Structure probing data (2A3) for a 207-nucleotide construct.
RNA sequence: GGGAACGACUCGAGUAGAGUCGAAAAACAUAUUACGAUAUGAUUCAUAUGGUGUCUUACUGGUUCGUACCAAGGGACAUAAUGGUUUCUUGUUUCCAACCAAAGAACAAGUGGCGAGCCUGAAUAAAAAACUGACUGCCGUUCGCGGCAGUCAGAACGUUAAUCGCUUGUUCGCAAGCGAUUAACGAAAAGAAACAACAACAACAAC
Reactivity to 2A3 in 0.01 (KOAc 150mM, MgCl2 10mM, bicine 150mM(pH8.5), 24C), signal-to-noise 2, nucleotides 027 to 156: a010c070a030u120a040u060u110a100c090g030a010u020a010u110g070a070u050u140c060a020u090a110u160g110g000u040g010u040c030u040u120a150c050u010g010g000u040u090c070g050u050a060c010c010a030a030g030g030g000a000c020a020u170a080a100u080g080g000u060u000u000c020u000u010g010u000u030u000c020c020a060a060c000c010a100a100a000g020a010a010c000a040a020g020u020g070g020c030g020a010g010c000c010u070g060a090a010u150a090a070a010a010a000a000c000u000g000a010c000u000g000c010c000g000u050u050c170g010c000g050g000c010a010g000u010c000a000g000a000a010